[RMDB]
RNA sequence: GGGAACGACUCGAGUAGAGUCGAAAAAGAUCAUAGAAGGCAGCAAGGGCGAAUCAGAAAGGGCUUCGAGAUGCUGAGGCCAGAAUUUUUGAGUGACAGGCGAGUCCCGCAUCAUCAUGUCCACGCCGUACUACGCCUGUUUCGACAGGCGUAGUACAAAAGAAACAACAACAACAAC
Reactivity to DMS in 0.01 (KOAc 150mM, MgCl2 10mM, bicine 150mM(pH8.5), 24C), signal-to-noise 2, nucleotides 027 to 126: a080g020a060u030c040a090u000a040g000a080a010g000g020c080a070g010c000a020a030g020g010g010c040g020a200a120u050c140a080g000a040a100a030g000g000g050c010u000u000c020g010a140g010a090u060g010c090u060g020a040g000g000c010c000a040g060a020a000u040u030u010u000u000g000a090g020u030g000a090c110a050g000g040c030g000a060g030u010c000c000c030g020c160a000u070c010a030u000c060a190u000g010u010c060c000a080c120g000c070c090
Reactivity to 2A3 in 0.01 (KOAc 150mM, MgCl2 10mM, bicine 150mM(pH8.5), 24C), signal-to-noise 2, nucleotides 027 to 126: a000g030a020u020c020a000u050a100g140a130a030g200g030c030a000g000c020a040a070g030g010g010c040g060a020a020u080c000a000g160a060a080a060g050g020g000c000u030u030c060g100a130g010a090u060g010c040u070g030a010g040g030c000c010a010g110a040a040u090u050u000u080u190g080a080g080u090g010a050c050a090g020g020c010g030a030g070u010c000c000c000g010c000a030u050c000a010u040c000a020u110g000u030c000c000a020c050g000c000c000
About this RNA
An RNA of 177 nucleotides, treated with DMS and 2A3 and read out base by base. Reactivities are given for positions 27 through 126. 2A3 is a SHAPE reagent: it acylates the 2'-hydroxyl of flexible nucleotides of all four kinds. The reactions ran in a buffer of 150 mM KOAc, 10 mM MgCl2 and 150 mM bicine (pH 8.5), at 24 C.